[RMDB]
An RNA of 177 nucleotides, treated with 2A3 and DMS and read out base by base. Reactivities are rounded to 0.1 and cut off at 0 and 3. The reactions ran in a buffer of 150 mM KOAc, 10 mM MgCl2 and 150 mM bicine (pH 8.5), at 24 C. In probing experiments dimethyl sulfate is read out at A N1 and C N3, which are open when not base-paired.

RNA sequence: GGGAACGACUCGAGUAGAGUCGAAAAGAAGAGAAGUGAGUAAACGCCUAUGCGGUAUAAGCACAGCCCGUCAAAAGGCGUGCGGCGAGGGCACCAGAAGCUGUGCUUAUAACUGGGCCUUCGAAGAAUAUGGAGCCAUCUUCGGAUGGCUCCAUAUAAAAGAAACAACAACAACAAC
Reactivity to 2A3 in 0.01 (KOAc 150mM, MgCl2 10mM, bicine 150mM(pH8.5), 24C), signal-to-noise 1, nucleotides 027 to 126: g130a020a020g140a000g060a050a080g090u170g170a030g050u110a160a020a060c000g030c000c010u110a120u280g040c030g010g000u070a070u050a230a030g020c030a000c000a030g050c000c020c010g000u070c010a060a050a000a050g050g100c040g040u040g000c000g000g050c000g050a050g000g000g040c160a210c040c020a000g000a080a000g000c010u070g000u060g010c000u000u050a070u060a140a000c000u000g000g000g000c000c000u000u040c000g000a020a020g010a050
Reactivity to DMS in 0.01 (KOAc 150mM, MgCl2 10mM, bicine 150mM(pH8.5), 24C), signal-to-noise 1, nucleotides 027 to 126: g070a120a030g020a090g010a070a060g010u010g000a090g000u010a070a090a000c090g000c000c000u000a110u040g000c000g030g000u000a050u070a030a040g040c070a000c000a040g000c100c000c010g000u010c300a070a020a120a120g020g070c000g000u000g000c130g000g000c020g020a010g050g000g030c060a070c000c040a000g010a140a060g000c020u000g010u020g010c000u000u010a030u070a070a130c010u000g000g000g000c000c010u040u010c020g030a080a080g000a050

Reactivities are given for positions 27 through 126.